This 207-nucleotide RNA was probed chemically with 2A3 and DMS. Values are in units of 0.01, from 0 to 300, in steps of 10. The DMS profile rests on 10,005 reads.
[RMDB]
RNA sequence: GGGAACGACUCGAGUAGAGUCGAAAACAUUGGUUCGCCAAUGGUCUUUACCUUUGUGCGUAUCAAGGUUUGAACUACACAACCAAGUCCCAUUGGGACUUGAAGUUGUGCAAACCUGACCACGCGCACUCUGGUUACCUGCUAGCUUCGGCUAGAACCCUAUUAUCCAGUUCGCUGGAUAAUAGGGAAAAGAAACAACAACAACAAC
Reactivity to 2A3 in 0.01 (KOAc 150mM, MgCl2 10mM, bicine 150mM(pH8.5), 24C), signal-to-noise 9, nucleotides 027 to 156: c000a000u010u010g020g020u060u090c220g080c090c010a010a010u020g030g040u030c090u050u150u080a020c000c000u010u010u010g010u000g000c010g020u070a050u150c120a150a110g010g000u000u000u000g030a060a040c080u260a050c180a000c000a010a000c010c000a000a010g000u000c030c000c040a110u280u300g000g000g000a000c000u000u010g040a150a030g010u000u000g000u000g010c000a000a000a000c000c000u010g030a040c060c070a120c230g010c000g000c000a000c000u020c020u010g010g010u010u030a080c020c030u060g110c010u020a010g000c000u040u070c300g080g000c000u010a010g020a030a080
Reactivity to DMS in 0.01 (KOAc 150mM, MgCl2 10mM, bicine 150mM(pH8.5), 24C), signal-to-noise 3, nucleotides 027 to 156: c010a040u010u000g000g010u000u000c240g000c010c000a010a030u000g010g010u000c070u010u000u000a050c020c020u010u000u010g020u000g010c020g020u010a170u000c030a060a050g010g010u000u000u010g010a120a190c050u020a090c010a010c010a020a030c020c000a020a030g000u000c000c000c040a300u000u010g060g030g000a020c000u000u000g010a050a100g020u000u010g040u000g000c000a020a060a080c030c000u010g000a110c100c080a080c120g010c020g030c010a030c030u000c060u000g000g020u010u000a050c040c020u000g010c000u000a070g010c010u000u010c230g050g020c040u000a030g000a050a170